Chemical mapping of a 177-nucleotide RNA with 2A3 and DMS. 2A3 adducts were read by reverse transcription with SuperScript II with manganese.
RNA sequence: GGGAACGACUCGAGUAGAGUCGAAAAUUUCCGCUGUCGCUGCGGGAACGAUGCGGUCAACCAUGGUGUUCGGGAAAGUGACAUGUUGCUGAAUCCAAUUAGCCAGCGCUGGAUCACGGACCGUGGAACUCGAGGCAUAGUUCGCUAUGCCUCGAGUAAAAGAAACAACAACAACAAC
Reactivity to 2A3 in 0.01 (KOAc 150mM, MgCl2 10mM, bicine 150mM(pH8.5), 24C), signal-to-noise 2, nucleotides 027 to 126: u020u000u000c020c000g000c030u080g110u130c040g010c110u070g040c020g000g000g040a030a020c010g030a050u110g000c020g000g020u020c040a040a040c060c000a010u070g170g000u140g130u100u050c090g000g000g010a110a040a000g020u030g050a070c040a190u160g090u090u200g020c010u010g010a030a080u130c060c000a100a170u080u020a010g050c020c020a020g000c000g000c010u080g050g000a100u090c020a020c090g050g020a010c040c000g000u000g000g040a070
Reactivity to DMS in 0.01 (KOAc 150mM, MgCl2 10mM, bicine 150mM(pH8.5), 24C), signal-to-noise 3, nucleotides 027 to 126: u000u000u020c000c010g050c040u000g020u000c110g020c080u010g010c050g010g020g020a040a040c100g020a080u000g030c060g000g030u030c020a110a220c040c010a020u020g020g020u010g020u010u000c100g020g000g010a050a130a110g000u000g020a040c080a140u030g030u000u020g040c010u000g020a090a030u010c230c300a070a120u000u000a020g010c130c020a010g000c050g000c060u000g000g020a200u000c030a090c070g040g020a050c020c000g020u000g010g000a120